[RMDB]
RNA sequence: GGGAACGACUCGAGUAGAGUCGAAAAGCACGUCCGGCAUGGCCCGUGCGAACACUUGACCACCGGAUAGGCCGGUCUUGUGGAUUAGGACGUUCUACGUCCGGCUUGGCCCGUAGUUCGUCCGAAAGGCUUCCUUGACGUUCGCGUCGAGGAAGCCAAAAGAAACAACAACAACAAC
Reactivity to DMS in 0.01 (KOAc 150mM, MgCl2 10mM, bicine 150mM(pH8.5), 24C), signal-to-noise 2, nucleotides 027 to 126: g010c000a040c030g000u010c100c000g000g020c050a110u070g030g010c090c070c100g000u000g000c050g000a160a140c010a000c030u020u030g000a000c020c010a290c000c000g040g010a200u070a060g010g010c090c060g000g010u000c010u050u000g030u010g010g010a130u020u010a070g000g010a000c000g030u000u010c030u000a020c010g000u020c040c060g020g000c080u020u060g000g000c180c060c030g000u000a000g000u000u000c010g000u010c000c000g000a040a010a130
Reactivity to 2A3 in 0.01 (KOAc 150mM, MgCl2 10mM, bicine 150mM(pH8.5), 24C), signal-to-noise 3, nucleotides 027 to 126: g020c000a010c000g010u010c060c000g120g070c220a170u190g100g020c040c050c000g000u000g010c020g040a130a010c010a010c010u010u050g010a000c000c000a000c000c000g000g120a150u120a100g120g000c110c080g010g010u000c000u000u020g000u020g030g020a060u040u050a080g000g010a000c000g000u000u000c010u020a020c000g100u050c100c020g040g070c050u130u230g070g070c070c090c000g000u000a000g030u030u000c000g000u010c000c000g000a010a010a020